RNA sequence: GGGAACGACUCGAGUAGAGUCGAAAACUCGAAAGAGACCUGCAUAUCUUAGGCAGAUGAUCAAGUCACGUCUGAAAAGCGAAAGCCCUAAGAUAUGCAGCUGUGAUGACUUGCCGCAGAAAAUAAACAUUAGGUCCAUCUUCGGAUGGACCUAAUGAAAAGAAACAACAACAACAAC
Reactivity to DMS in 0.01 (KOAc 150mM, MgCl2 10mM, bicine 150mM(pH8.5), 24C), signal-to-noise 3, nucleotides 027 to 126: c010u020c000g000a130a030a100g030a060g000a090c300c010u000g010c000a010u000a000u000c000u000u010a000g010g010c070a000g010a000u020g000a080u010c010a020a010g030u020c040a300c040g000u000c010u000g000a180a050a100a150g070c020g000a130a170a100g020c010c000c000u010a060a000g010a000u000a000u000g010c020a030g000c000u000g010u010g000a150u000g010a000c000u000u000g030c260c030g000c000a040g030a210a000a060a100u060a040a070a130
Reactivity to 2A3 in 0.01 (KOAc 150mM, MgCl2 10mM, bicine 150mM(pH8.5), 24C), signal-to-noise 4, nucleotides 027 to 126: c000u000c000g040a010a020a010g070a010g030a090c000c020u000g000c010a000u000a000u000c000u000u000a010g000g030c010a000g000a020u010g000a050u070c010a010a000g010u010c010a000c070g020u000c010u000g060a220a160a100a020g030c030g050a080a010a000g000c000c000c010u000a000a000g000a000u000a000u000g000c000a000g000c000u000g010u020g010a040u070g000a010c000u010u010g020c000c010g000c010a000g150a030a130a020a010u270a040a110a020